[RMDB]
RNA sequence: GGGAACGACUCGAGUAGAGUCGAAAACAAAAUACAUUGGUACCUUUCCAUAGCAACAUCCUAUAAGAUGACAUUUAAUAACCAAUCGGUUAUAGCAGUGUAGAAGGGAAUGAUGAUUAUGAUCAUUUGGAUUAUAUUAUAAAUGUUACACUGACUACACUACCGCCAGGUUCGCCUGGCGGUAGUGAAAAGAAACAACAACAACAAC
Reactivity to 2A3 in 0.01 (KOAc 150mM, MgCl2 10mM, bicine 150mM(pH8.5), 24C), signal-to-noise 1, nucleotides 027 to 156: c070a000a210a080a000u220a050c120a100u100u230g140g020u120a090c000c000u070u090u090c050c070a280u120a030g020c050a000a170c000a050u120c000c090u240a160u120a280a120g030a030u020g000a000c030a070u030u100u140a270a020u090a030a030c070c000a080a130u210c220g050g010u110u120a070u020a050g100c000a000g000u000g020u000a050g070a090a140g190g190g090a040a040u030g020a030u000g030a020u050u050a190u280g050a020u000c000a050u020u090u060g020g000a000u000u190a170u050a070u110u190a140u240a180a100a030u090g020u030u000a000c000a000c020u000g030a000c030u040a000